[RMDB]
An RNA of 177 nucleotides, treated with DMS and 2A3 and read out base by base. Values cover nucleotides 27 to 126.
RNA sequence: GGGAACGACUCGAGUAGAGUCGAAAAGAACCACCGAGGCCACUCCUACAAGAGGAGAUCGAUAGACUCGGGGUGUACGCGCCAAGGCAACGAGGCGUUGAGCCCGCGAGCACUAAUCGGCCAAGCCGCAACACUAUUCGUUCGCGAAUAGUGUUGCAAAAGAAACAACAACAACAAC
Reactivity to DMS in 0.01 (KOAc 150mM, MgCl2 10mM, bicine 150mM(pH8.5), 24C), signal-to-noise 4, nucleotides 027 to 126: g000a100a210c020c000a070c160c100g000a190g000g000c010c020a300c000u000c000c000u010a170c300a210a100g010a060g000g000a000g010a060u020c080g010a010u000a040g000a300c000u000c000g010g080g000g000u060g010u030a230c270g010c040g000c000c000a030a280g000g000c140a110a090c030g000a300g000g000c000g020u000u010g000a290g000c030c000c000g010c020g000a010g000c030a120c000u000a020a080u010c110g020g000c000c060a120a080g000c210c040
Reactivity to 2A3 in 0.01 (KOAc 150mM, MgCl2 10mM, bicine 150mM(pH8.5), 24C), signal-to-noise 2, nucleotides 027 to 126: g040a050a030c010c020a020c040c050g090a120g010g000c000c020a030c020u000c010c000u110a140c110a170a110g060a040g290g000a010g010a050u090c070g030a010u020a050g020a030c000u000c000g000g000g000g000u020g020u050a050c040g010c000g000c010c000a010a000g020g010c010a040a050c040g000a020g010g000c040g000u020u130g010a000g000c010c000c030g230c010g040a000g010c040a040c080u060a100a110u080c030g000g000c000c010a010a010g060c030c040

The data come from the RNA Mapping Database (RMDB), libraries RFM100 and RFMREP. The RNA was probed in 150 mM KOAc, 10 mM MgCl2 and 150 mM bicine (pH 8.5) at 24 C.